This 207-nucleotide RNA was probed chemically with 2A3 and DMS. The reactions ran in a buffer of 150 mM KOAc, 10 mM MgCl2 and 150 mM bicine (pH 8.5), at 24 C. The DMS profile rests on 2,559 reads. DMS adducts were read by reverse transcription with MarathonRT. Source: RMDB library M2RFPK, as collected in RNAgym.

RNA sequence: GGGAACGACUCGAGUAGAGUCGAAAAACGGUCAUAUACGUAUGACCCAAUGAGCAUAACAGGGCCACCCCAAAGCGUUCACAUUGUGGCCCCUGUCAGAUUCUGGUAAAUCUGCGAGUUCUGCUAAAUUAGGUAACUCUCUUCGGAGAGUUACCAAUCAGAUCAAGUACUUCGGUACUUGAUCUGAAAAAGAAACAACAACAACAAC
Reactivity to 2A3 in 0.01 (KOAc 150mM, MgCl2 10mM, bicine 150mM(pH8.5), 24C), signal-to-noise 3, nucleotides 027 to 156: a000c010g000g000u010c000a000u030a000u010a030c130g100u030a010u010g010a010c000c010c000a070a160u230g020a020g000c010a020u040a080a020c010a000g010g000g020c020c010a010c010c040c000c030a010a140a030g130c080g120u230u170c100a080c060a140u140u190g000u000g000g020c000c000c020c010u050g080u050c000a010g000a040u030u060c040u210g110g050u110a030a060a020u000c020u030g020c010g030a070g030u030u030c060u060g050c040u110a140a150a170u170u140a060g000g010u000a000a000c000u000c000u010c010u030u060c180g050g000a000g000a000g000u000u000a000c000c000a000a000
Reactivity to DMS in 0.01 (KOAc 150mM, MgCl2 10mM, bicine 150mM(pH8.5), 24C), signal-to-noise 1, nucleotides 027 to 156: a140c030g000g000u000c020a020u000a060u020a070c250g070u000a050u000g050a020c000c000c020a050a080u010g000a140g020c030a070u000a070a050c000a140g000g030g040c000c040a040c000c050c010c030a060a080a190g040c070g040u000u000c060a070c080a200u030u000g000u010g020g040c010c000c010c060u000g010u000c000a050g010a040u000u000c100u000g050g030u000a060a030a030u000c040u010g010c040g010a170g070u000u000c130u020g020c020u000a030a080a170u000u000a080g040g020u000a000a020c010u010c000u000c010u010u000c300g020g020a010g040a050g020u000u010a000c000c010a000a030